RNA sequence: GGGAACGACUCGAGUAGAGUCGAAAAAAUGAGCUUUCGGAUCGUUAUACCGGCGAAGUGAGAAAACUCGGCAUCGACCUUGGCUUCACCACGCGCAGCCGCCUGAUCUGGGCCGUGUUCGCGCCGACGGCCGGUUAUCACCGCGGAUCGCUCGCCGCAUUAUAUAAUCAUUCGUGAUUAUAUAAUGAAAAGAAACAACAACAACAAC
Reactivity to DMS in 0.01 (KOAc 150mM, MgCl2 10mM, bicine 150mM(pH8.5), 24C), signal-to-noise 3, nucleotides 027 to 156: a040a070u010g000a060g020c020u010u010u000c040g020g010a050u000c030g010u000u010a100u000a040c020c000g000g040c030g030a050a080g000u000g020a240g010a110a070a080a060c030u000c030g050g010c020a120u000c140g030a050c070c010u010u010g020g000c030u000u000c040a040c030c070a070c080g020c030g020c070a150g020c030c040g020c060c060u010g000a100u000c080u000g030g040g000c040c030g050u010g010u000u000c040g000c060g010c030c020g020a300c060g020g050c000c010g010g000u000u000a050u000c060a070c060c010g020c020g010g010a100u000c060g030c010u000c020g020c010c050g000
Reactivity to 2A3 in 0.01 (KOAc 150mM, MgCl2 10mM, bicine 150mM(pH8.5), 24C), signal-to-noise 6, nucleotides 027 to 156: a000a010u190g010a010g020c020u040u050u060c040g060g060a140u070c030g020u040u040a070u060a090c030c000g000g010c030g060a120a030g030u070g030a040g050a030a110a060a070c020u020c000g010g010c040a220u160c110g060a300c020c010u050u080g050g000c040u100u080c040a030c080c000a030c060g000c010g000c010a020g040c040c030g130c020c020u250g100a300u140c130u190g020g020g000c040c040g040u070g030u110u070c090g000c000g020c020c010g080a110c060g090g000c000c000g000g000u030u050a050u030c020a010c010c060g050c040g050g010a030u040c050g000c010u000c010g020c000c000g020